Chemical mapping of a 207-nucleotide RNA with DMS and 2A3.

RNA sequence: GGGAACGACUCGAGUAGAGUCGAAAAUGAGCACUUCGGUGCUCAAAAAAGAUAUGGAACGUGUGGUGGUUGAGCUGACAUUUCGGAAACGAAAUGCCAGCAAUGAUGCCACGUAACAUCACGUUCCUAAGUCAAAAAAGGGGAAUUCGUUCCCCAAUAGUCCUAUGAGAUUCGUCUCAUAGGACUAAAAAGAAACAACAACAACAAC
Reactivity to DMS in 0.01 (KOAc 150mM, MgCl2 10mM, bicine 150mM(pH8.5), 24C), signal-to-noise 1, nucleotides 027 to 156: u010g000a000g010c000a010c000u000u000c300g080g050u000g000c010u050c010a010a000a060a120a060a050g010a040u000a060u000g020g000a020a000c010g030u010g030u020g000g020u000g000g010u000u020g000a010g030c010u000g010a010c000a020u000u000u000c000g010g020a070a030a060c010g000a010a010a020u000g020c010c050a010g020c010a040a010u000g020a100u000g000c000c000a000c000g040u000a020a050c140a020u020c000a030c010g030u030u000c000c000u000a000a050g010u000c000a020a010a070a160a070a130g020g000g030g010a040a100u000u010c090g030u000u010c000c010c010c020a010a040
Reactivity to 2A3 in 0.01 (KOAc 150mM, MgCl2 10mM, bicine 150mM(pH8.5), 24C), signal-to-noise 2, nucleotides 027 to 156: u110g000a000g010c010a000c030u050u130c300g160g010u030g000c030u070c030a020a000a000a000a000a010g010a010u010a010u020g000g000a010a000c010g000u000g000u010g000g000u000g030g020u000u010g010a000g000c000u000g010a010c000a000u000u000u000c000g000g000a000a000a000c000g000a000a000a000u000g020c000c010a000g010c000a010a060u000g000a000u010g000c010c000a000c000g000u010a000a000c010a050u140c010a000c000g000u000u010c010c000u000a000a000g000u010c010a000a000a040a000a000a250g030g010g010g030a010a010u080u030c120g030u060u020c000c010c010c000a000a000